[RMDB]
RNA sequence: GGGAACGACUCGAGUAGAGUCGAAAAUCAGUACUACUGAAAUAGCACUUCUUCGCUUCGUGUAUUUUUACUAUGGUUAAUUAUCACAUAGCGCAAACGGUCAUUUGUGUAUCACUAUUCAUAAGAUACAUCGCCGAUACUUCGGUAUCGGCGAUGUAAAAGAAACAACAACAACAAC
Reactivity to 2A3 in 0.01 (KOAc 150mM, MgCl2 10mM, bicine 150mM(pH8.5), 24C), signal-to-noise 1, nucleotides 027 to 126: u090c000a080g090u040a090c030u020a000c050u020g070a150a060a060u070a080g030c000a000c000u070u060c000u010u130c050g000c050u000u000c000g090u000g110u000a050u100u000u000u000u160a090c040u050a110u110g040g080u160u110a000a030u080u170a110u030c000a000c000a020u020a000g000c000g000c050a170a000a140c080g000g050u000c000a000u010u020u020g000u000g000u000a000u090c050a050c000u120a300u080u040c000a000u020a130a030g000a000u010

Background
This 177-nucleotide RNA was probed chemically with 2A3. For 2A3 the reverse transcriptase was SuperScript II with manganese.